[RMDB]
RNA sequence: GGGAACGACUCGAGUAGAGUCGAAAACGGAGGAGCUACGACCUCUACGGAGGUCGUAGCUCCUCCGAAAUUCUGUUUUUCGAACAGAACUGAAUCGAAGAAAGCGACUGGAUACGUCCAGUCGCAAACCGUACUAAUGAUUCGUCAUUAGUACGGUAAAAGAAACAACAACAACAAC
Reactivity to DMS in 0.01 (KOAc 150mM, MgCl2 10mM, bicine 150mM(pH8.5), 24C), signal-to-noise 1, nucleotides 027 to 126: c050g040g050a070g060g040a090g070c020u030a000c000g030a060c030c020u020c000u000a110c240g030g050a020g020g090u010c010g000u000a010g040c000u000c020c000u010c000c000g010a020a030a100u000u000c000u000g010u010u000u000u000u010c120g000a030a020c020a020g000a010a100c110u000g020a070a080u010c040g000a090a080g020a070a190a110g010c000g000a010c000u000g010g000a080u010a070c190g010u000c000c000a000g000u000c010g000c000a020a030